Structure probing data (2A3 and DMS) for a 207-nucleotide construct.
For DMS, 4,878 sequencing reads were counted.
The reactions ran in a buffer of 150 mM KOAc, 10 mM MgCl2 and 150 mM bicine (pH 8.5), at 24 C.
Source: RMDB library M2RFOK, as collected in RNAgym.
[RMDB]
RNA sequence: GGGAACGACUCGAGUAGAGUCGAAAAAUCCUCAGGUUCAUAAGCGUGAUGAUUGGGUGUUCAUGCUCCAUGCAUGACAUGUGCCUCCUUUGAACCUUGUUACGACCUUGGCACAUUACCCAUCUGCAAAAGACGUUCGCGUUCGCGCGAACGUCAAGGAAAAGAACAAGUUCGCUUGUUCUUUUCCAAAAGAAACAACAACAACAAC
Reactivity to 2A3 in 0.01 (KOAc 150mM, MgCl2 10mM, bicine 150mM(pH8.5), 24C), signal-to-noise 3, nucleotides 027 to 156: a000u030c000c000u010c010a000g000g000u000u000c010a010u070a260a060g040c090g160u120g100a130u050g020a020u120u230g020g010g000u060g040u100u020c000a000u010g000c010u090c200c080a130u300g000c000a000u010g010a000c020a020u010g000u000g010c000c000u000c030c000u010u040u020g010a000a000c010c000u010u100g090u030u120a090c110g030a090c020c080u050u050g010g000c010a010c000a020u030u170a040c000c000c000a000u000c010u050g070c050a060a050a030a100g000a000c010g000u000u000c020g010c010g030u050u030c160g010c000g010c000g110a000a000c000g000u000c000a000a000
Reactivity to DMS in 0.01 (KOAc 150mM, MgCl2 10mM, bicine 150mM(pH8.5), 24C), signal-to-noise 2, nucleotides 027 to 156: a170u000c010c000u010c060a030g020g000u000u000c010a060u000a040a100g000c110g010u000g020a140u000g010a100u000u020g030g010g030u000g020u010u000c010a020u000g020c000u010c220c200a170u010g070c010a030u000g020a060c300a140u000g020u000g020c010c000u010c110c030u000u010u000g010a040a040c010c010u000u000g020u010u000a150c200g000a120c090c070u000u000g000g000c000a030c000a080u010u000a070c000c000c010a050u000c030u010g020c090a090a060a150a130g000a010c020g020u000u000c000g010c010g040u000u010c300g020c010g030c040g000a010a000c000g020u000c000a020a040